The record gives the reactivity of an RNA of 177 nucleotides to 2A3 and DMS.
RNA sequence: GGGAACGACUCGAGUAGAGUCGAAAACAGAGCACAAGAAACAAUUAAUGUCAAUCUGCGCGCAUAAGCAGAACUUGUGACUAAUUGAAGUAUUAAGAAGUAGGGAGCAUGUGAGCAAUGAAAUUACUUCAUUGCGUAUGUUCGCAUACGCAAUGAAAAAAGAAACAACAACAACAAC
Reactivity to 2A3 in 0.01 (KOAc 150mM, MgCl2 10mM, bicine 150mM(pH8.5), 24C), signal-to-noise 8, nucleotides 027 to 126: c030a010g080a010g030c030a020c030a080a040g030a040a080a030c020a030a040u090u190a100a120u200g040u030c050a030a070u000c010u010g000c030g000c030g020c080a080u080a260a060g000c000a000g020a040a050c020u070u070g040u030g100a060c010u040a030a020u020u040g040a030a000g040u060a060u110u110a090a100g040a080a000g040u090a080g030g020g020a010g010c030a030u050g030u030g070a060g030c030a030a020u080g060a050a030a060u180u070a050c070
Reactivity to DMS in 0.01 (KOAc 150mM, MgCl2 10mM, bicine 150mM(pH8.5), 24C), signal-to-noise 9, nucleotides 027 to 126: c040a090g000a080g010c080a050c090a030a010g000a160a180a130c040a010a030u010u010a070a100u030g010u000c060a060a120u010c000u000g010c010g010c280g010c280a100u030a080a170g020c000a010g000a040a210c160u020u020g020u010g010a050c010u000a020a040u010u010g010a060a060g010u000a050u010u010a090a080g000a050a080g000u010a040g010g000g000a050g000c040a030u020g010u020g000a080g020c050a030a030u010g000a040a030a090u020u010a090c160
For DMS the reverse transcriptase was MarathonRT. Source: RMDB libraries RFM100 and RFMREP, as collected in RNAgym.